[RMDB]
RNA sequence: GGGAACGACUCGAGUAGAGUCGAAAAGCAGCGCUCUGCCUGGCGCAUGAUGUGAAAAAGUUGUGAAAUGUCCGCCACCUCGCAGAAGAUGGCGUUUUCUUGCAGCUGCGACUGGGACUGGAAGUCAUGAGUAAAUAAAUUUCGAUUUAUUUACUCAAAAAGAAACAACAACAACAAC
Reactivity to 2A3 in 0.01 (KOAc 150mM, MgCl2 10mM, bicine 150mM(pH8.5), 24C), signal-to-noise 3, nucleotides 027 to 126: g030c050a010g010c000g000c020u020c030u090g050c020c000u030g020g000c030g000c020a040u110g030a050u100g070u090g100a080a060a010a010a020g070u090u060g020u030g070a030a070a110u140g050u060c020c010g010c000c000a020c010c020u000c010g080c070a080g010a280a010g050a090u120g050g000c010g010u070u030u060u020c040u020u080g010c010a020g010c000u030g020c030g020a030c030u040g000g000g060a050c060u100g060g050a050a020g020u000c020a120
Reactivity to DMS in 0.01 (KOAc 150mM, MgCl2 10mM, bicine 150mM(pH8.5), 24C), signal-to-noise 9, nucleotides 027 to 126: g010c070a090g010c050g010c030u000c050u000g010c070c040u000g010g020c060g010c040a070u010g010a070u010g010u000g000a060a080a090a110a080g010u000u000g020u000g000a040a070a090u010g010u000c160c020g010c010c010a030c050c050u000c040g020c150a080g000a070a030g010a060u000g010g010c020g010u000u000u000u010c060u000u000g010c030a080g000c020u000g000c040g000a070c090u000g010g010g010a080c040u010g010g010a070a080g010u010c080a140
The record gives the reactivity of an RNA of 177 nucleotides to 2A3 and DMS. The DMS profile rests on 28,207 reads. The reactions ran in a buffer of 150 mM KOAc, 10 mM MgCl2 and 150 mM bicine (pH 8.5), at 24 C.